Notes: The data come from the RNA Mapping Database (RMDB), libraries RFM100 and RFMREP. Structure probing data (DMS and 2A3) for a 177-nucleotide construct. Reactivities are given for positions 27 through 126. For DMS the reverse transcriptase was MarathonRT. The RNA was probed in 150 mM KOAc, 10 mM MgCl2 and 150 mM bicine (pH 8.5) at 24 C.
[RMDB]
RNA sequence: GGGAACGACUCGAGUAGAGUCGAAAAGAUGCGCAUUGCACAAAGGACCGUGUACUUGCCCGCUCACAUUGGGCGGUUCCGUUGCUGCAAACUUGUUCUGGUAAAAAACUUUGGGAAAAAUCCGUCUGUUGAUCUUUUUAUUCGUAAAAAGAUCAACAAAAGAAACAACAACAACAAC
Reactivity to DMS in 0.01 (KOAc 150mM, MgCl2 10mM, bicine 150mM(pH8.5), 24C), signal-to-noise 4, nucleotides 027 to 126: g010a090u020g040c070g010c070a050u020u010g020c040a050c060a040a100a140g010g010a040c150c080g000u010g010u020a040c100u000u000g000c080c000c030g000c050u000c070a070c240a190u030u030g000g000g010c000g010g000u010u010c010c010g000u010u000g010c090u000g020c020a030a070a120c100u010u010g000u000u010c020u020g000g010u040a000a080a090a110a060a070c060u010u030u010g000g010g010a010a070a050a080a070u010c020c020g000u010c070u000
Reactivity to 2A3 in 0.01 (KOAc 150mM, MgCl2 10mM, bicine 150mM(pH8.5), 24C), signal-to-noise 9, nucleotides 027 to 126: g050a040u100g010c030g000c060a050u030u070g020c020a010c030a040a120a020g060g020a020c020c050g040u060g030u080a100c080u050u130g030c000c010c010g010c030u090c020a130c010a180u130u190g000g010g000c000g010g000u100u020c020c010g030u050u060g020c060u010g000c000a030a060a060c030u040u070g030u070u020c030u050g040g030u130a070a060a020a030a050a070c070u110u100u120g030g020g020a080a100a010a050a090u040c020c010g070u040c080u050